[RMDB]
RNA sequence: GGGAACGACUCGAGUAGAGUCGAAAAGGAACGUUGUUCGCAACGUUCCGUGCCGGAAACGGACAUGACGAUCGCGCGCAUGUCGGGAAACCGUAAAGGCGAGCAUCAUGGUGUUCGCACCAUGAAAUCCAGCAGUGGAAUUCGUUCCACUGCUGGAAAAAGAAACAACAACAACAAC
Reactivity to 2A3 in 0.01 (KOAc 150mM, MgCl2 10mM, bicine 150mM(pH8.5), 24C), signal-to-noise 2, nucleotides 027 to 126: g000g000a000a000c010g010u000u010g060u030u060c190g000c060a010a000c000g000u010u000c010c000g000u030g050c000c020g050g060a120a170a000c030g040g030a030c010a030u070g010a020c030g040a090u210c090g000c010g000c000g000c130a030u030g050u070c000g020g000g040a110a080a010c010c040g020u080a130a070a000g040g010c020g010a020g080c010a090u030c000a010u030g010g000u000g050u040u090c260g000c070a010c040c000a030u000g030a080a040a000
Reactivity to DMS in 0.01 (KOAc 150mM, MgCl2 10mM, bicine 150mM(pH8.5), 24C), signal-to-noise 2, nucleotides 027 to 126: g010g000a010a010c000g010u000u000g010u010u010c200g020c020a010a030c010g020u020u000c000c000g010u000g010c030c020g040g020a100a060a150c030g000g030a060c010a020u000g000a090c050g000a100u010c160g020c100g010c060g030c010a040u000g020u010c020g000g000g000a100a050a160c080c000g000u020a020a180a140g010g000c020g010a060g010c120a140u010c000a000u000g000g000u010g020u010u010c150g010c000a020c000c010a010u010g010a070a110a140